[RMDB]
RNA sequence: GGGAACGACUCGAGUAGAGUCGAAAAACAUUAGAGAGCCAGAAGGUGGACGCCAGAGGGAAAGAAAAGAGAAAGUUGUACCAGGUGGAGGAUGUAGAGUUCGAAUUUAAAGAGGGGGUGGUGGUGACAUUCGAUACACAUUCGUGUGUAUCGAAUGAAAAGAAACAACAACAACAAC
Reactivity to 2A3 in 0.01 (KOAc 150mM, MgCl2 10mM, bicine 150mM(pH8.5), 24C), signal-to-noise 1, nucleotides 027 to 126: a000c000a010u040u130a020g030a000g000a020g080c000c030a040g030a050a030g140g030u070g030g060a070c100g000c080c020a010g040a040g010g050g030a010a060a100g070a000a130a050a000g140a030g000a050a110a050g010u030u030g050u050a100c000c030a010g050g000u050g030g040a020g020g040a020u040g000u070a030g010a020g080u050u070c050g010a000a090u110u040u140a230a100a030g120a080g020g020g000g030g000u030g040g010u000g020g000u060g030a000
Reactivity to DMS in 0.01 (KOAc 150mM, MgCl2 10mM, bicine 150mM(pH8.5), 24C), signal-to-noise 3, nucleotides 027 to 126: a050c100a050u020u000a090g020a120g000a130g020c040c030a070g010a120a060g020g010u010g010g000a060c090g000c060c050a040g000a110g000g020g000a060a040a070g010a050a060a070a070g000a110g020a100a050a100g010u010u000g020u010a110c040c050a110g010g000u010g010g000a060g020g010a050u020g010u020a070g020a100g000u000u010c070g000a060a070u020u000u030a060a070a090g010a150g000g010g000g010g010u000g000g020u000g010g020u000g000a140

Record summary:
The record gives the reactivity of an RNA of 177 nucleotides to 2A3 and DMS. The 2A3 profile rests on 828 reads. High DMS reactivity at an A or C suggests that its Watson-Crick edge is free. Source: RMDB library OK2TRN, as collected in RNAgym. Conditions: 150 mM KOAc, 10 mM MgCl2 and 150 mM bicine (pH 8.5), 24 C.